The record gives the reactivity of an RNA of 207 nucleotides to DMS and 2A3. The RNA was probed in 150 mM KOAc, 10 mM MgCl2 and 150 mM bicine (pH 8.5) at 24 C. For DMS the reverse transcriptase was MarathonRT.

RNA sequence: GGGAACGACUCGAGUAGAGUCGAAAAGCAUCGACGACGGUCCUGCCAUGAGACCGUAACGAGGACAUGUCGCCUCGAAUUGCGUCGGGGAGCCGGCAGCUUACCCCAAGGAUGAGCGCCUAAUGCCUAUACCCGAUUCGCUUCGGCGAAUCGGGAACAAAGGCAUAACUUUCGAGUUAUGCCUUUGAAAAGAAACAACAACAACAAC
Reactivity to DMS in 0.01 (KOAc 150mM, MgCl2 10mM, bicine 150mM(pH8.5), 24C), signal-to-noise 2, nucleotides 027 to 156: g010c040a110u000c030g020a070c000g010a060c010g000g000u000c000c010u010g020c050c300a160u020g010a080g000a070c020c020g020u010a040a080c010g010a090g000g010a080c020a110u010g030u020c050g000c000c000u000c020g000a090a100u000u000g020c070g030u000c050g000g000g000g000a090g030c060c060g000g000c080a110g020c030u000u000a070c010c000c020c080a130a150g030g010a060u000g000a040g010c020g020c020c010u000a060a090u000g020c010c010u000a160u000a170c000c000c010g000a030u010u000c000g030c010u000u000c300g090g000c000g000a010a000u000c000g010g000g000a020a040
Reactivity to 2A3 in 0.01 (KOAc 150mM, MgCl2 10mM, bicine 150mM(pH8.5), 24C), signal-to-noise 7, nucleotides 027 to 156: g030c020a050u050c020g020a020c010g010a000c000g010g010u000c020c010u090g220c080c060a240u210g040a100g000a110c010c000g000u000a030a050c010g000a010g000g020a030c080a150u240g050u170c120g000c010c000u010c000g040a110a090u120u140g040c010g020u010c020g010g000g000g000a010g040c040c060g040g000c020a050g020c010u030u110a220c000c010c020c040a050a080g030g000a100u080g020a020g030c020g020c010c020u070a130a030u090g030c010c010u100a100u080a110c000c000c000g000a000u000u000c000g000c010u030u020c160g100g000c000g000a000a000u000c000g000g000g000a010a000